Structure probing data (2A3 and DMS) for a 207-nucleotide construct. The DMS profile rests on 8,542 reads. For DMS the reverse transcriptase was MarathonRT.

RNA sequence: GGGAACGACUCGAGUAGAGUCGAAAAGUUUAGUUUUCUGGUGAGGGUGGUUCUCUGCUUCCAGGAUGGCACCUUUAUGCUGCCUUCUCUGGAGGGGACAAACACACUAUGUCCUCACAUGACAGAAGGUGGAAGAGCAAGAGGGACAAACUUCCUACUUUUAAUCAUAGUUCGCUAUGAUUAAAAGAAAAGAAACAACAACAACAAC
Reactivity to 2A3 in 0.01 (KOAc 150mM, MgCl2 10mM, bicine 150mM(pH8.5), 24C), signal-to-noise 8, nucleotides 027 to 156: g000u060u090u190a040g010u040u060u040u040c080u100g040g000u050g030a020g010g040g010u050g010g040u140u050c030u010c010u060g150c020u050u010c000c000a010g010g010a010u010g010g000c010a020c030c000u090u230u090a180u210g020c040u010g000c000c000u020u000c200u000c010u020g010g020a060g020g010g000g000a000c030a010a120a010c070a010c020a020c140u100a100u190g040u010c000c000u010c010a030c000a010u100g020a010c030a040g040a040a020g040g030u060g020g040a080a060g010a020g080c020a050a020g020a020g040g030g010a010c010a010a080a040c020u090u070c020c010u060a080
Reactivity to DMS in 0.01 (KOAc 150mM, MgCl2 10mM, bicine 150mM(pH8.5), 24C), signal-to-noise 3, nucleotides 027 to 156: g020u000u010u000a100g010u000u010u000u000c030u010g010g040u000g010a030g010g000g050u000g000g010u030u010c080u010c020u010g010c030u000u000c010c010a030g020g010a050u000g010g030c010a020c040c020u000u010u000a100u030g050c070u010g030c000c010u000u000c010u000c020u000g010g010a060g020g010g020g020a050c020a040a050a090c070a100c090a100c110u000a120u000g020u000c000c010u010c050a040c060a080u000g010a140c030a050g010a040a050g030g020u010g000g020a060a060g000a100g030c080a060a080g010a070g000g020g000a080c020a050a060a100c060u000u000c010c020u000a160